[RMDB]
RNA sequence: GGGAACGACUCGAGUAGAGUCGAAAACCAAAUGCCUCGUCAUCUAAUUAGUGACGCGCAUGAAUGGAUCAAUGAGAUUCCCACUGUCCCUAACUACUAUACAGCGAAACCACUGCUAGGGGAACGGCGGUGAAGCAUAGUUCGCUAUGCUUCACCGAAAAGAAACAACAACAACAAC
Reactivity to 2A3 in 0.01 (KOAc 150mM, MgCl2 10mM, bicine 150mM(pH8.5), 24C), signal-to-noise 9, nucleotides 027 to 126: c010c000a000a070a030u040g010c010c040u130c030g030u000c010a050u020c050u160a250a160u190u200a110g020u010g000a000c010g000c010g000c010a010u040g050a130a080u120g020g040a050u070c060a100a080u220g030a050g020a180u050u050c020c000c010a050c030u040g070u110c010c000c000u050a110a080c040u120a050c030u070a090u050a220c050a020g020c020g100a120a040a050c040c050a050c050u050g020c020u050a040g000g000g020g020a020a050c000g060g010
Reactivity to DMS in 0.01 (KOAc 150mM, MgCl2 10mM, bicine 150mM(pH8.5), 24C), signal-to-noise 9, nucleotides 027 to 126: c010c010a110a130a020u010g000c020c030u040c010g000u000c010a010u020c070u010a150a100u030u030a160g020u010g010a030c000g050c300g000c010a010u010g020a170a120u000g000g000a100u010c080a130a090u020g000a040g010a140u000u000c010c000c020a120c030u030g000u000c010c000c000u010a060a120c040u020a090c080u010a070u020a110c100a010g010c050g010a110a120a090c170c050a070c050u010g010c100u000a080g000g000g000g010a050a050c110g000g000
Conditions: 150 mM KOAc, 10 mM MgCl2 and 150 mM bicine (pH 8.5), 24 C. Chemical mapping of a 177-nucleotide RNA with 2A3 and DMS.